An RNA of 177 nucleotides, treated with DMS and read out base by base. Values cover nucleotides 27 to 126. The DMS profile rests on 905 reads. The reactions ran in a buffer of 150 mM KOAc, 10 mM MgCl2 and 150 mM bicine (pH 8.5), at 24 C.

RNA sequence: GGGAACGACUCGAGUAGAGUCGAAAAGUCACCAAUUUUGUGGUAGUUUGUUACAGCACCCAUAGGAAACUAAUACACAGAGGAUGUAAAUCUUAACAGUAUUGAGUGUUCUAUGAACACAGUAUAACACUGAGCUACCUUUCGAGGUAGCUCAGUGAAAAGAAACAACAACAACAAC
Reactivity to DMS in 0.01 (KOAc 150mM, MgCl2 10mM, bicine 150mM(pH8.5), 24C), signal-to-noise 1, nucleotides 027 to 126: g050u020c070a160c010c040a180a050u020u010u040u020g030u030g010g000u000a030g010u000u010u000g000u000u000a040c130a070g020c020a090c110c050c020a070u000a050g020g000a030a050a020c060u000a030a050u020a000c000a230c250a180g030a070g000g000a060u000g000u000a040a080a020u010c060u010u010a060a070c230a180g010u000a020u000u000g000a110g020u000g000u000u000c030u000a050u000g000a070a060c030a070c080a040g000u000a070u000a050a150